[RMDB]
RNA sequence: GGGAACGACUCGAGUAGAGUCGAAAACUGUCGUUCUUCGGAACGACAGAAAGAACGCGUGGGUCACGCUAGGAGGAGCGUGUGGGACGCGACAAACCCAAAAAAGCGUUCGGUUCGCCGAACGCAACAUCACAGCCCAGUUCGCUGGGCUGUGAUGAAAAGAAACAACAACAACAAC
Reactivity to 2A3 in 0.01 (KOAc 150mM, MgCl2 10mM, bicine 150mM(pH8.5), 24C), signal-to-noise 2, nucleotides 027 to 126: c000u000g000u010c000g020u000u010c010u030u000c170g080g010a000a000c000g010a000c000a000g000a000a010a000g040a090a020c020g020c000g000u020g040g150g130u100c000a000c000g010c020u010a060g070g150a090g070g070a020g040c020g000u010g010u040g040g120g040a000c020g020c000g000a000c000a010a070a030c000c000c000a040a030a000a000a000a030g010c010g000u000u000c010g000g010u050u030c240g020c030c000g000a000a010c000g000c010a000a000
Reactivity to DMS in 0.01 (KOAc 150mM, MgCl2 10mM, bicine 150mM(pH8.5), 24C), signal-to-noise 2, nucleotides 027 to 126: c010u000g010u000c000g020u000u020c000u000u040c180g060g020a000a000c000g000a030c000a030g000a020a030a130g000a100a100c030g010c000g040u000g010g000g030u010c000a000c010g010c000u000a070g030g020a090g000g020a070g000c060g020u030g010u010g000g060g010a000c000g010c000g020a080c030a050a100a090c010c000c010a030a070a120a090a100a110g010c000g000u000u000c000g000g000u000u030c240g010c030c000g010a020a000c000g020c000a000a050

Chemical mapping of a 177-nucleotide RNA with 2A3 and DMS. For 2A3, 3,914 sequencing reads were counted. DMS adducts were read by reverse transcription with MarathonRT. It was measured as part of the RMDB library M2PK50.